[RMDB]
An RNA of 207 nucleotides, treated with DMS and 2A3 and read out base by base.
It was measured as part of the RMDB library OK3TST.
The RNA was probed in 150 mM KOAc, 10 mM MgCl2 and 150 mM bicine (pH 8.5) at 24 C.
RNA sequence: GGGAACGACUCGAGUAGAGUCGAAAACUCACUCAUUACGAUGAGUGAGAAUGCUUAAGCCUCAAUAAAGCUUGGCUUGAGUGCCUCAAGCAGAUAUAGACUGAAACAUUUAGUAUGGCCAAGCAGGGAGCAACGGCUCGAGUACGCUCGAGCCGAAGACUACCUAGUCAUUCGUGACUAGGUAGUCAAAAGAAACAACAACAACAAC
Reactivity to DMS in 0.01 (KOAc 150mM, MgCl2 10mM, bicine 150mM(pH8.5), 24C), signal-to-noise 2, nucleotides 027 to 156: c000u000c020a000c010u000c010a040u000u020a230c270g030a110u020g050a000g000u010g010a020g010a050a060u010g020c030u010u000a060a070g030c000c000u000c080a070a100u010a090a110a100g020c010u000u010g050g000c000u000u000g030a120g020u030g030c040c050u030c080a190a030g040c000a100g010a150u030a090u010a090g000a170c070u030g010a080a090a040c000a040u000u000u000a110g050u000a060u030g020g040c010c020a000a060g050c040a230g000g020g020a090g020c020a140a220c040g010g050c030u000c010g000a030g030u000a080c300g060c020u000c010g020a030g010c000c010g040a000a040
Reactivity to 2A3 in 0.01 (KOAc 150mM, MgCl2 10mM, bicine 150mM(pH8.5), 24C), signal-to-noise 4, nucleotides 027 to 156: c000u010c000a000c000u000c000a010u010u120a020c220g130a030u000g000a000g010u010g000a000g010a020a040u110g000c010u030u030a050a040g020c010c000u040c040a060a110u110a170a100a010g010c020u010u010g010g000c010u010u060g030a030g050u090g020c010c010u050c080a030a010g000c020a000g110a050u100a040u120a170g100a060c070u110g050a070a120a010c020a040u040u140u090a070g060u080a110u130g060g000c000c000a010a000g020c020a020g020g050g020a050g010c050a050a120c020g000g020c000u000c000g000a010g000u040a040c220g020c100u000c000g000a000g000c000c000g000a000a000